[RMDB]
RNA sequence: GGGAACGACUCGAGUAGAGUCGAAAAGCUGCCUCUGACGUCCUUCUCCCCCGGAAACGGGGCCGAAGGGUGGUAAUGCGAGUCGCCUGGCGCUGGCACGGGUAUGCGUGGGGGUCGACCCUGGCCGCGUAGCGUAUGGUUUCGACCAUACGCUACGAAAAGAAACAACAACAACAAC
Reactivity to 2A3 in 0.01 (KOAc 150mM, MgCl2 10mM, bicine 150mM(pH8.5), 24C), signal-to-noise 3, nucleotides 027 to 126: g040c040u040g020c000c010u030c040u070g060a030c020g020u020c000c000u010u000c020u040c000c010c000c000c010g000g030a000a030a010c000g010g000g000g000c020c010g000a010a000g000g000g010u030g020g020u110a110a040u180g040c010g030a000g050u060c010g030c040c020u030g060g010c040g000c070u100g040g010c030a030c050g030g000g010u100a070u190g060c060g000u120g010g010g000g000g050u050c030g030a080c010c010c010u020g090g000c030c000g060
Reactivity to DMS in 0.01 (KOAc 150mM, MgCl2 10mM, bicine 150mM(pH8.5), 24C), signal-to-noise 4, nucleotides 027 to 126: g020c060u010g010c040c010u010c050u010g010a110c030g000u000c010c010u000u010c000u010c300c000c000c000c000g010g000a060a080a190c000g000g000g010g020c030c060g000a020a020g010g000g010u010g000g010u010a070a070u010g000c020g010a070g010u000c050g020c020c010u010g020g020c060g020c040u000g010g020c050a090c090g010g000g010u000a040u010g000c050g000u000g000g000g010g010g010u000c060g010a090c030c020c010u010g010g000c030c050g010